[RMDB]
RNA sequence: GGGAACGACUCGAGUAGAGUCGAAAAGAUGCCUGCCUCGCAAUGAGGCAGGUCGCAGUGACUCGGAGGCUCCGACUGUCUAAUAACAACAUAGGUGACCGCAAAUCCGCAAGGACGCGUACGGUCAUUACGGCUUUUUCUUCGGAAAAAGCCGUAAAAAAGAAACAACAACAACAAC
Reactivity to 2A3 in 0.01 (KOAc 150mM, MgCl2 10mM, bicine 150mM(pH8.5), 24C), signal-to-noise 1, nucleotides 027 to 126: g000a060u150g060c000c000u000g040c000c000u000c000g130c270a150a230u300g000a000g000g020c010a010g000g000u030c040g000c000a070g110u000g130a090c030u050c070g000g080a000g040g140c170u040c150c000g020a030c020u000g050u000c030u030a000a070u090a090a070c030a020a020c000a140u080a020g120g000u000g050a000c000c000g000c050a010a000a010u030c000c080g010c090a050a100g140g000a070c070g000c000g100u110a000c030g000g000u020c000a000
Reactivity to DMS in 0.01 (KOAc 150mM, MgCl2 10mM, bicine 150mM(pH8.5), 24C), signal-to-noise 1, nucleotides 027 to 126: g000a000u060g060c000c000u000g000c000c000u000c050g000c300a290a020u030g030a000g020g000c000a000g060g050u000c060g000c120a120g050u050g060a150c080u050c000g040g090a120g000g000c110u000c000c000g020a030c130u020g000u000c070u000a100a010u000a120a140c260a060a090c130a000u000a060g000g000u000g000a000c000c000g010c000a060a300a110u000c000c020g020c300a060a030g000g000a030c000g000c300g000u040a060c150g000g000u000c000a060
An RNA of 177 nucleotides, treated with 2A3 and DMS and read out base by base. For 2A3 the reverse transcriptase was SuperScript II with manganese. It was measured as part of the RMDB library RFM100.